[RMDB]
RNA sequence: GGGAACGACUCGAGUAGAGUCGAAAAGAUAUGGAUCUACUUGGGAGAAGAUACUCGGAAACGAGUAUACUUCGAAGAACAAGACGGAUCCUAAGUCAAAAGUCACCCAGGUUCGCCUGGGUGACAACUUCCUAAUAUAGUUCGCUAUAUUAGGAAGAAAAGAAACAACAACAACAAC
Reactivity to 2A3 in 0.01 (KOAc 150mM, MgCl2 10mM, bicine 150mM(pH8.5), 24C), signal-to-noise 2, nucleotides 027 to 126: g000a000u040a000u070g010g000a000u000c000u030a040c010u040u010g010g000g020a080g010a030a010g000a010u000a010c000u000c000g030g020a040a000a000c000g000a000g010u010a000u020a050c000u000u000c030g010a040a010g000a000a000c000a000a020g270a220c300g030g000a000u000c000c000u000a000a000g000u010c010a100a000a100a130g010u000c000a000c000c020c000a000g040g020u050u090c300g070c080c000u000g000g030g000u000g000a000c000a000a000
Reactivity to DMS in 0.01 (KOAc 150mM, MgCl2 10mM, bicine 150mM(pH8.5), 24C), signal-to-noise 3, nucleotides 027 to 126: g000a020u000a040u020g000g000a000u020c010u000a110c010u010u000g010g040g000a040g000a020a010g000a060u000a010c000u000c010g030g000a010a010a020c000g010a020g000u000a010u000a080c000u000u010c010g010a080a140g020a230a270c000a010a010g010a150c210g010g000a020u010c000c000u000a020a090g000u000c020a080a080a170a140g010u000c000a000c000c000c000a010g000g010u000u000c300g010c020c000u010g000g000g000u000g000a000c010a050a050